Structure probing data (2A3 and DMS) for a 177-nucleotide construct. Values cover nucleotides 27 to 126. 2A3 adducts were read by reverse transcription with SuperScript II with manganese.
RNA sequence: GGGAACGACUCGAGUAGAGUCGAAAAGAUAUGGAGCUGGUCGGGAGCUAUAUUUCGGAAACGAAAUUUAGCAUCGAUCGACUGGCUCCUAAGUCAAAUCAUCGUGAUGCUUCGGCAUCACGAUGAACCACUAAGUGAAGUUCGCUUCACUUAGUGGAAAAGAAACAACAACAACAAC
Reactivity to 2A3 in 0.01 (KOAc 150mM, MgCl2 10mM, bicine 150mM(pH8.5), 24C), signal-to-noise 6, nucleotides 027 to 126: g010a000u020a010u060g000g000a000g010c020u020g040g000u010c010g020g040g130a250g000c000u010a010u000a000u040u010u000c000g000g010a010a020a000c010g000a000a020a000u040u040u010a010g000c020a120u300c190g220a300u020c010g000a000c000u000g010g010c000u010c000c000u000a000a000g000u000c010a010a020a250u050c000a000u000c000g010u010g010a000u000g000c070u070u110c300g160g000c000a000u000c000a000c000g000a000u000g000a000a010
Reactivity to DMS in 0.01 (KOAc 150mM, MgCl2 10mM, bicine 150mM(pH8.5), 24C), signal-to-noise 5, nucleotides 027 to 126: g010a020u000a100u000g010g000a010g020c000u000g010g010u000c000g040g020g010a140g040c000u000a010u000a020u000u000u010c000g020g010a030a020a070c000g010a000a010a010u000u000u000a010g020c000a300u000c270g000a110u000c010g000a000c000u000g000g000c000u000c000c000u000a000a040g010u010c010a100a150a180u000c000a000u000c000g010u000g000a010u000g000c010u000u020c250g020g000c000a010u000c000a000c000g010a000u000g000a010a150
The DMS profile rests on 9,155 reads. The data come from the RNA Mapping Database (RMDB), library TTRDES.